Notes: The data come from the RNA Mapping Database (RMDB), libraries RFM100 and RFMREP. Structure probing data (2A3 and DMS) for a 177-nucleotide construct. For 2A3 the reverse transcriptase was SuperScript II with manganese. DMS adducts were read by reverse transcription with MarathonRT.
RNA sequence: GGGAACGACUCGAGUAGAGUCGAAAAUACAAUAUAUUUGAGCAAGUUAGAUAGAUGGUGGCUAAUCUCAUGAAAAUGGGGUGAUGCCUAUGGUUUUGGUUUCUACUCCAAGAAAGGAAUAGCAUGAUUACUGUAAAUUCUUCGGAAUUUACAGUAAAAAAGAAACAACAACAACAAC
Reactivity to 2A3 in 0.01 (KOAc 150mM, MgCl2 10mM, bicine 150mM(pH8.5), 24C), signal-to-noise 6, nucleotides 027 to 126: u130a010c050a050a020u090a010u030a030u160u100u110g050a040g030c050a070a050g060u140u090a030g020a160u080a030g090a030u110g110g150u060g020g000c000u010a010a030u000c000u000c020a000u020g090a060a060a030a030u010g010g000g000g030u010g000a020u260g010c000c000u020a040u010g020g030u010u000u070u090g030g000u000u070u000c000u020a040c000u010c010c000a070a080g140a190a110a020g100g010a070a090u090a070g050c080a050u080g010a080
Reactivity to DMS in 0.01 (KOAc 150mM, MgCl2 10mM, bicine 150mM(pH8.5), 24C), signal-to-noise 6, nucleotides 027 to 126: u020a070c070a080a070u030a220u020a060u000u000u000g010a090g000c080a060a080g000u010u010a040g000a090u020a040g010a060u010g010g020u020g010g010c020u000a170a030u000c010u010c010a010u000g000a080a050a120a020u000g000g000g000g010u000g000a090u030g000c000c010u000a050u010g010g010u000u000u010u010g000g010u000u010u000c010u000a050c060u000c010c060a060a110g010a060a080a100g000g010a050a050u000a050g000c140a050u010g000a200